The record gives the reactivity of an RNA of 177 nucleotides to 2A3 and DMS. The reactions ran in a buffer of 150 mM KOAc, 10 mM MgCl2 and 150 mM bicine (pH 8.5), at 24 C.

[RMDB]
RNA sequence: GGGAACGACUCGAGUAGAGUCGAAAAGACUUUGCGUACCACAUGCGAUGAACAUGGUGGCGCAAGGACGAGGAAAGUCCGGACUCCACAGAGCACGGUGAUUGUUAACAACAACCCGGGGUGACCCCUGAUCGGAGAUCUUCGGAUCUCCGAUCAGAAAAGAAACAACAACAACAAC
Reactivity to 2A3 in 0.01 (KOAc 150mM, MgCl2 10mM, bicine 150mM(pH8.5), 24C), signal-to-noise 2, nucleotides 027 to 126: g050a000c040u000u030u000g000c010g020u100a080c000c000a000c010a000u000g000c030g090a120u240g050a050a020c000a000u050g020g010u030g000g040c020g000c000a000a010g000g000a010c040g050a050g080g220a110a180a070g100u000c000c000g000g010a030c020u030c050c000a040c050a050g040a010g030c060a010c090g040g040u040g090a300u000u050g040u010u050a130a040c090a010a000c000a010a000c000c000c000g000g000g000g070u100g040a100c000c010c050
Reactivity to DMS in 0.01 (KOAc 150mM, MgCl2 10mM, bicine 150mM(pH8.5), 24C), signal-to-noise 1, nucleotides 027 to 126: g010a110c000u000u000u000g000c000g030u040a120c000c000a040c020a000u000g010c040g000a040u020g040a080a210c010a050u000g000g030u000g000g110c030g000c020a070a000g000g030a000c000g020a170g000g020a160a170a110g000u010c010c000g060g000a090c000u000c000c040a040c070a110g000a050g000c120a130c060g010g000u000g000a110u000u020g000u020u000a210a040c130a170a100c060a000a130c040c000c000g040g000g000g020u000g020a150c070c000c000